[RMDB]
RNA sequence: GGGAACGACUCGAGUAGAGUCGAAAAUGGACUUUUUACAGUUCCUACUUAUCCGGUUUUAACGCUGUUUUAUUGGCGCAAAGGUUUACGGAUAAACAAGUAAUAAUUAAACCUUUUGUGUGCGAAAAUUGGACGUUUAGGUUCGCCUAAACGUCAACAUGCCUUUGUACUUCGGUACAAAGGCAUGAAAAGAAACAACAACAACAAC
Reactivity to DMS in 0.01 (KOAc 150mM, MgCl2 10mM, bicine 150mM(pH8.5), 24C), signal-to-noise 1, nucleotides 027 to 156: u020g040g000a070c040u000u030u000u000u000a120c080a120g000u000u000c000c030u010a080c040u000u000a040u000c000c000g020g000u000u000u000u000a200a020c020g000c000u010g020u000u000u020u000a150u030u020g000g030c010g050c040a040a070a020g040g000u000u000u000a230c040g000g020a020u000a010a030a140c040a040a130g000u000a090a130u020a130a230u000u000a040a020a020c000c000u100u000u000u000g020u000g010u000g000c010g000a040a070a130a200u000u000g000g020a030c000g030u000u000u000a010g000g040u020u000c300g000c000c000u000a010a010a020c000g030u010c000a010a070
Reactivity to 2A3 in 0.01 (KOAc 150mM, MgCl2 10mM, bicine 150mM(pH8.5), 24C), signal-to-noise 3, nucleotides 027 to 156: u120g000g010a060c030u020u120u170u220u190a110c130a040g000u090u060c010c000u040a060c010u010u020a010u010c000c000g040g000u030u000u030u020a080a040c020g000c010u030g200u180u100u080u220a140u210u170g020g000c000g010c030a030a010a000g000g020u000u000u000a000c000g000g000a000u010a000a100a020c050a080a000g080u100a030a140u060a060a030u150u160a000a010a010c000c000u000u050u060u140g110u010g000u060g040c100g070a090a050a030a110u120u080g110g000a000c010g000u000u000u000a010g020g020u040u070c100g070c020c000u000a000a000a000c000g000u000c000a000a000